Chemical mapping of a 177-nucleotide RNA with 2A3 and DMS. Reactivities are rounded to 0.1 and cut off at 0 and 3. The 2A3 profile rests on 12,489 reads. DMS adducts were read by reverse transcription with MarathonRT.
RNA sequence: GGGAACGACUCGAGUAGAGUCGAAAAGCCUCAGCGUGGUCGCACCACUCGAUUUCCACCCCCGGCAGGCAUUCGCGCAGCAGUUCGGGAAAAAGCGAGCUGACCCGCAGGGCGCCGCCCGUCGCCCAAUCAUACAUGUGUUCGCACAUGUAUGAUUAAAAGAAACAACAACAACAAC
Reactivity to 2A3 in 0.01 (KOAc 150mM, MgCl2 10mM, bicine 150mM(pH8.5), 24C), signal-to-noise 4, nucleotides 027 to 126: g030c000c010u060c060a030g000c030g110u230g020g010u030c030g010c080a120c120c010a020c030u030c010g100a090u050u040u030c110c040a090c030c010c000c000c020g020g010c020a030g050g050c010a050u140u140c090g000c010g000c070a030g010c010a010g040u140u110c010g030g000g000a040a040a020a010a020g060c010g010a010g010c030u050g060a040c000c000c010g000c010a010g020g000g000c040g030c010c020g020c020c010c010g040u040c020g020c000c010c000
Reactivity to DMS in 0.01 (KOAc 150mM, MgCl2 10mM, bicine 150mM(pH8.5), 24C), signal-to-noise 9, nucleotides 027 to 126: g000c030c010u010c090a090g020c050g030u010g020g020u000c040g010c140a190c150c140a090c030u000c020g010a090u000u010u000c050c070a220c190c060c010c010c010g010g010c030a070g010g010c030a080u010u010c100g010c060g020c100a120g000c030a070g010u010u010c030g000g010g010a030a060a040a080a060g010c010g000a040g000c070u000g010a060c030c050c010g010c050a240g020g000g000c040g010c050c060g010c020c000c020g010u010c050g000c000c010c030